[RMDB]
RNA sequence: GGGAACGACUCGAGUAGAGUCGAAAAUUGAAUGCAUUUAGUGAAAGAGACAGCGUCAACCAUUCUCUUUCUGAUACUUAACCCAAUAUUGAUUGAUACUCGUUGGCGGAACUUCUUUCUAUAUUCCGGAUGAUGCUAUGUUCGCAUAGCAUCAUCCAAAAGAAACAACAACAACAAC
Reactivity to 2A3 in 0.01 (KOAc 150mM, MgCl2 10mM, bicine 150mM(pH8.5), 24C), signal-to-noise 3, nucleotides 027 to 126: u060u070g060a060a080u140g050c090a060u040u130u230a160g010u100g060a060a020a020g040a000g010a010c040a190g040c010g000u010c040a020a020c020c000a070u100u070c000u000c000u020u020u000c010u020g000a020u040a180c040u090u090a060a080c000c000c000a000a150u080a040u060u070g030a050u000u040g010a030u020a130c040u030c070g020u010u000g000g000c010g030g050a060a070c060u020u010c020u000u100u000c040u030a050u000a060u200u030c040c010
Reactivity to DMS in 0.01 (KOAc 150mM, MgCl2 10mM, bicine 150mM(pH8.5), 24C), signal-to-noise 1, nucleotides 027 to 126: u070u030g010a190a010u030g040c060a060u000u000u000a040g050u040g000a060a030a010g020a040g000a030c130a090g000c020g020u000c050a000a020c070c060a160u000u000c030u000c000u000u000u000c000u040g000a180u000a000c020u000u020a070a070c040c000c010a090a180u050a100u000u000g000a010u000u000g000a040u020a090c110u020c300g000u000u000g020g040c030g030g000a130a050c190u070u000c020u000u000u000c000u000a130u040a160u000u000c160c040